[RMDB]
RNA sequence: GGGAACGACUCGAGUAGAGUCGAAAAGCGCUGCGCCGCCCAGCCCUGUCGCCCCCCGGAGGUGAUCCCUCCCUCCUGCCGGCCCGCCAGCCUGACCUGUGCUUGGCUCCGCGGGCCGCAGCCUCGGAAGUUCAGCCUACUUCGGUAGGCUGAACUUAAAAGAAACAACAACAACAAC
Reactivity to DMS in 0.01 (KOAc 150mM, MgCl2 10mM, bicine 150mM(pH8.5), 24C), signal-to-noise 1, nucleotides 027 to 126: g000c070g030c090u000g010c020g030c070c050g200c000c020c010a100g000c050c020c010u030g020u000c020g010c020c000c000c030c110c000g020g030a040g000g000u020g010a150u030c000c000c000u000c040c000c050u010c010c000u000g040c060c000g020g000c010c000c010g000c000c300a050g000c010c010u030g010a070c060c230u020g010u070g020c060u000u080g000g030c000u010c150c300g040c010g040g030g000c000c000g000c030a010g000c120c030u000c060g000g000